[RMDB]
RNA sequence: GGGAACGACUCGAGUAGAGUCGAAAAUUGCUCCGUGGGGAGUAGACCAGAUAGGACAUCAUCAUGCCGCGGUCCUCGUGUUGGAGGGCAUGACAGUGGUACACCACCUCGCCAACGUACGUUGCCGCCAUCGGUGGUCAUUCGUGACCACCGAUGGAAAAGAAACAACAACAACAAC
Reactivity to DMS in 0.01 (KOAc 150mM, MgCl2 10mM, bicine 150mM(pH8.5), 24C), signal-to-noise 1, nucleotides 027 to 126: u070u030g000c000u000c000c020g060u000g010g020g010g020a080g020u000a060g010a150c000c090a030g000a110u010a030g010g000a110c020a060u000c100a000u020c010a120u000g000c080c040g040c120g000g070u000c020c020u020c060g100u040g040u020u000g000g010a060g140g060g000c080a010u000g000a000c060a160g000u000g000g040u050a100c120a090c020c000a060c020c040u000c020g000c070c000a010a030c010g030u020a020c070g000u010u020g000c010c010g000
Reactivity to 2A3 in 0.01 (KOAc 150mM, MgCl2 10mM, bicine 150mM(pH8.5), 24C), signal-to-noise 2, nucleotides 027 to 126: u150u120g000c030u000c040c000g100u300g010g160g020g000a030g010u050a040g000a080c000c000a000g060a160u120a060g050g020a020c000a070u070c000a020u000c000a020u060g060c020c000g100c000g040g000u040c020c000u020c000g210u160g050u060u040g040g000a030g040g010g000c020a010u050g000a000c010a030g030u040g090g010u080a010c030a000c070c000a050c000c020u030c010g100c060c000a000a010c010g100u110a000c040g050u030u040g040c060c010g000
Chemical mapping of a 177-nucleotide RNA with DMS and 2A3. 2A3 adducts were read by reverse transcription with SuperScript II with manganese. For DMS, 1,660 sequencing reads were counted. DMS adducts were read by reverse transcription with MarathonRT. It was measured as part of the RMDB library OK1LIB. The reactions ran in a buffer of 150 mM KOAc, 10 mM MgCl2 and 150 mM bicine (pH 8.5), at 24 C. High DMS reactivity at an A or C suggests that its Watson-Crick edge is free.